Background
Structure probing data (2A3 and DMS) for a 177-nucleotide construct. For 2A3, 5,251 sequencing reads were counted. Reactivities are rounded to 0.1 and cut off at 0 and 3. The DMS profile rests on 1,551 reads. The data come from the RNA Mapping Database (RMDB), library TTRINS. The RNA was probed in 150 mM KOAc, 10 mM MgCl2 and 150 mM bicine (pH 8.5) at 24 C.
[RMDB]
RNA sequence: GGGAACGACUCGAGUAGAGUCGAAAAGAUAUGGAACAUCUUGGACCCAUCGUAUAAUCUGGAACUACUUCUUGUGUCGGAAACGACAUGGAAGCCAGAUUAUACGAUGGCUAGAUGUUCCUAAGUCGAUUCUUAUGUCCUUCGGGACAUAAGAAUCAAAAGAAACAACAACAACAAC
Reactivity to 2A3 in 0.01 (KOAc 150mM, MgCl2 10mM, bicine 150mM(pH8.5), 24C), signal-to-noise 3, nucleotides 027 to 126: g060a030u170a100u220g000g000a000a000c000a000u010c040u060u210g130g160a300c030c000c000a000u010c000g000u000a000u000a010a010u000c000u010g020g000a120a030c170u300a060c000u300u050c030u300u300g050u010g000u020c000g000g000a180a110a100c020g030a010c000a020u000g010g000a000a000g000c000c000a000g000a000u020u000a010u000a000c010g010a000u010g010g000c010u000a000g000a030u020g000u000u000c010c000u010a100a000g130u120c070
Reactivity to DMS in 0.01 (KOAc 150mM, MgCl2 10mM, bicine 150mM(pH8.5), 24C), signal-to-noise 2, nucleotides 027 to 126: g000a110u000a300u000g030g010a010a000c000a020u010c000u010u020g000g010a270c300c020c010a000u000c000g000u000a000u000a000a000u010c000u000g020g000a120a000c030u030a300c000u000u000c000u000u000g120u000g000u000c000g010g040a160a130a300c010g000a010c010a010u000g000g010a020a010g010c030c000a000g000a010u000u000a010u000a000c000g000a000u000g000g000c020u000a040g020a020u000g020u010u000c000c000u000a010a100g000u000c070